[RMDB]
RNA sequence: GGGAACGACUCGAGUAGAGUCGAAAAAGGAGUGCUUGGACCAGGCCAGAUUGCAAACCUGCGAGCCCGUGUCCACGCACUGCAUGGGCUGGCCCGUCAGCGUAUUCCAGAAACGGAUACACCUAUCCGAGUGGAGCAGGUUCGCCUGCUCCACUCGAAAAGAAACAACAACAACAAC
Reactivity to DMS in 0.01 (KOAc 150mM, MgCl2 10mM, bicine 150mM(pH8.5), 24C), signal-to-noise 1, nucleotides 027 to 126: a000g000g010a060g000u000g000c000u000u000g000g070a000c030c030a090g000g020c000c080a070g000a080u000u000g000c300a000a060a070c280c100u050g000c150g000a130g030c020c000c020g000u030g000u000c000c010a030c070g000c000a000c030u000g030c140a020u000g000g030g000c000u040g030g000c050c010c020g000u080c000a000g020c020g000u000a080u000u020c110c050a120g020a070a080a090c130g000g010a020u010a080c060a050c120c070u000a080u000c060
Reactivity to 2A3 in 0.01 (KOAc 150mM, MgCl2 10mM, bicine 150mM(pH8.5), 24C), signal-to-noise 4, nucleotides 027 to 126: a000g100g010a020g010u030g000c010u020u000g020g010a010c000c000a000g000g000c020c000a070g010a090u070u250g120c100a090a090a150c040c050u070g050c100g050a040g020c020c010c030g110u160g020u050c010c010a000c020g010c000a010c000u000g000c010a050u100g040g040g000c050u060g060g050c020c020c020g050u060c000a000g030c020g020u060a100u120u060c020c000a010g090a090a070a000c030g010g010a020u080a050c050a060c010c040u110a110u060c040